[RMDB]
Notes
An RNA of 177 nucleotides, treated with DMS and read out base by base. Reactivities are given for positions 27 through 126. Values are in units of 0.01, from 0 to 300, in steps of 10. The reactions ran in a buffer of 150 mM KOAc, 10 mM MgCl2 and 150 mM bicine (pH 8.5), at 24 C.
RNA sequence: GGGAACGACUCGAGUAGAGUCGAAAAGAGCCGGAGCGGCUAGGGGUGGAGCCGAGUUCCGCGAGGAACCCGGCCGGGCAACUCAACCGGCCCGAACCCGACAGCUCACCUCGCAGGCGUCGGUGAGGGCAUCGGACUAGUUCGCUAGUCCGAUGCCAAAAGAAACAACAACAACAAC
Reactivity to DMS in 0.01 (KOAc 150mM, MgCl2 10mM, bicine 150mM(pH8.5), 24C), signal-to-noise 2, nucleotides 027 to 126: g000a270g030c040c010g000g000a150g030c100g000g000c040u000a040g010g000g000g030u000g000g030a170g010c000c000g000a030g020u000u000c000c010g000c300g000a240g000g010a030a000c000c010c000g000g040c000c010g000g000g010c010a080a010c080u000c300a100a120c300c240g000g010c000c000c000g000a070a040c030c010c020g000a110c100a080g000c010u000c020a150c120c010u000c040g000c070a160g000g010c020g000u000c020g040g000u010g010a080g000
The DMS profile rests on 825 reads.